Conditions: 150 mM KOAc, 10 mM MgCl2 and 150 mM bicine (pH 8.5), 24 C. Structure probing data (2A3 and DMS) for a 177-nucleotide construct. It was measured as part of the RMDB library OK2TRN.
RNA sequence: GGGAACGACUCGAGUAGAGUCGAAAAGAAUUUGUGGGUAAGCUACAACUUCCGGUAGCUGCGUCACACUUUAAGAGUGUGCUCACGGAGCCGAAGCUCAGCUUCGGUCCCCCAAGGGAAGACCAAAUCGAUUAAUUUACUUCGGUAAAUUAAUCGAAAAAGAAACAACAACAACAAC
Reactivity to 2A3 in 0.01 (KOAc 150mM, MgCl2 10mM, bicine 150mM(pH8.5), 24C), signal-to-noise 5, nucleotides 027 to 126: g030a020a140u020u030u040g010u010g010g010g000u010a000a010g000c000u000a010c000a120a080c020u010u000c000c000g010g010u000a000g020c010u000g000c000g000u000c000a000c000a000c000u070u110u210a300a140g300a000g300u000g000u000g000c000u000c000a000c000g000g000a000g020c000c000g000a000a000g010c040u080c300a040g000c010u030u000c000g000g000u000c010c020c000c000c000a040a030g120g000g010a010a000g000a010c020c070a050a050a100
Reactivity to DMS in 0.01 (KOAc 150mM, MgCl2 10mM, bicine 150mM(pH8.5), 24C), signal-to-noise 5, nucleotides 027 to 126: g010a100a080u000u010u010g030u000g010g000g000u000a300a230g000c010u000a000c010a020a120c050u000u000c010c010g020g010u000a000g000c000u000g000c010g010u000c000a000c000a010c000u000u000u010a110a090g010a010g020u010g010u000g000c000u000c000a010c010g000g000a020g010c000c010g010a010a010g020c010u010c240a130g000c000u000u000c000g000g000u000c030c030c000c110c100a120a090g010g010g010a010a020g020a220c210c140a040a070a140